The record gives the reactivity of an RNA of 177 nucleotides to DMS.
RNA sequence: GGGAACGACUCGAGUAGAGUCGAAAAGAUAUGGAUCACAGGACAUGAACUGAGGGUCGGAAACGACCCGAAAGUUCAACAGCCUGUGAGUCCUAAGUCAAAAGGUUAGUACUUCGGUACUAACCAAUCGAGGCAUAUACUUCGGUAUAUGCCUCGAAAAAGAAACAACAACAACAAC
Reactivity to DMS in 0.01 (KOAc 150mM, MgCl2 10mM, bicine 150mM(pH8.5), 24C), signal-to-noise 2, nucleotides 027 to 126: g020a050u000a300u000g030g020a210u000c000a010c000a000g000g000a050c040a300u000g010a000a000c000u000g000a300g000g000g010u000c000g020g000a040a120a130c000g020a030c030c050c000g000a000a110a000g010u000u000c010a020a040c140a110g000c010c000u000g020u000g000a030g010u000c000c000u000a040a060g000u000c000a160a080a060a120g040g010u020u010a000g020u000a010c000u000u060c260g000g000u000a010c000u020a010a000c000c010a040a000
Reactivities are given for positions 27 through 126.